[RMDB]
RNA sequence: GGGAACGACUCGAGUAGAGUCGAAAAGGAGCCCACAAGCCGAUAGAGGCGUAACUUGGGAUCAGACCAAUCAUGGUAGUGGAAGCGCCCAUCAAGCUGAUGGUGGUAAUCAUCACCACUUUCCGGCAGCAUCUCUCUAGUUCGCUAGAGAGAUGCUAAAAGAAACAACAACAACAAC
Reactivity to DMS in 0.01 (KOAc 150mM, MgCl2 10mM, bicine 150mM(pH8.5), 24C), signal-to-noise 3, nucleotides 027 to 126: g020g010a110g030c010c010c030a090c220a100a140g000c030c040g010a150u020a070g010a270g040g000c030g000u000a050a110c230u000u010g010g000g000a080u010c120a060g010a130c040c050a090a120u000c160a110u010g010g030u010a040g030u000g010g000a080a230g020c040g010c030c010c010a060u000c070a110a120g030c100u000g000a070u000g010g020u000g020g020u000a040a120u000c150a070u000c050a000c020c010a050c060u000u000u000c030c040g000g040c270
Reactivity to 2A3 in 0.01 (KOAc 150mM, MgCl2 10mM, bicine 150mM(pH8.5), 24C), signal-to-noise 2, nucleotides 027 to 126: g040g040a040g100c010c040c000a000c050a040a030g020c030c010g050a040u080a190g130a110g010g000c010g010u020a040a050c060u050u070g020g080g070a090u120c030a020g120a120c030c000a030a070u130c080a120u160g070g000u070a090g100u040g080g040a070a080g000c000g010c040c000c000a050u120c050a030a040g030c030u080g020a050u070g020g030u000g030g030u080a070a180u130c080a050u090c030a010c000c030a030c000u040u050u000c040c000g020g000c030